[RMDB]
Overview: Chemical mapping of a 207-nucleotide RNA with 2A3 and DMS. The RNA was probed in 150 mM KOAc, 10 mM MgCl2 and 150 mM bicine (pH 8.5) at 24 C. It was measured as part of the RMDB library M2RFPK.

RNA sequence: GGGAACGACUCGAGUAGAGUCGAAAAAUACAUACUGACACCGGUUGCUCAACAGGCUGUGUGGGACAAUAGAAUAACAAGGCUGUCAAUUUGAGCUUGACGGCUGCAACCCGAAUGGAGUGAAAUCGUAACCGGACUCACUUCGGUGAGUCCGGAACCCAAUUAAGAGAUUCGUCUCUUAAUUGGGAAAAGAAACAACAACAACAAC
Reactivity to 2A3 in 0.01 (KOAc 150mM, MgCl2 10mM, bicine 150mM(pH8.5), 24C), signal-to-noise 2, nucleotides 027 to 156: a000u150a040c020a030u150a070c060u070g080a040c020a010c030c060g100g060u070u050g030c000u020c090a110a090c040a180g050g010c050u010g040u020g000u080g100g040g020a020c050a050a140u100a090g080a060a090u080a090a040c050a100a020g010g000c000u000g000u040c000a010a010u100u070u230g030a030g060c000u010u000g000a000c000g040g000c000u050g000c020a060a100c020c000c010g050a040a090u180g030g020a070g020u080g040a100a080a050u100c070g020u050a060a070c020c000g000g010a000c000u000c000a010c000u040u050c090g080g000u000g010a020g020u000c010c000g000g000a000a000
Reactivity to DMS in 0.01 (KOAc 150mM, MgCl2 10mM, bicine 150mM(pH8.5), 24C), signal-to-noise 2, nucleotides 027 to 156: a030u000a140c050a180u000a170c040u000g040a100c020a070c030c000g010g000u010u000g000c010u020c060a110a100c100a050g000g000c060u000g030u010g020u010g010g040g000a050c070a120a120u000a070g010a110a100u010a100a090c050a090a190g040g060c010u030g050u000c000a050a060u000u000u000g010a150g010c300u000u000g000a020c020g000g000c030u000g010c000a060a080c000c000c050g000a060a160u000g010g000a090g010u010g010a070a110a090u000c060g060u000a070a090c030c020g030g030a010c000u000c010a000c020u010u000c210g060g000u000g010a040g000u010c000c010g010g000a000a020

For DMS the reverse transcriptase was MarathonRT.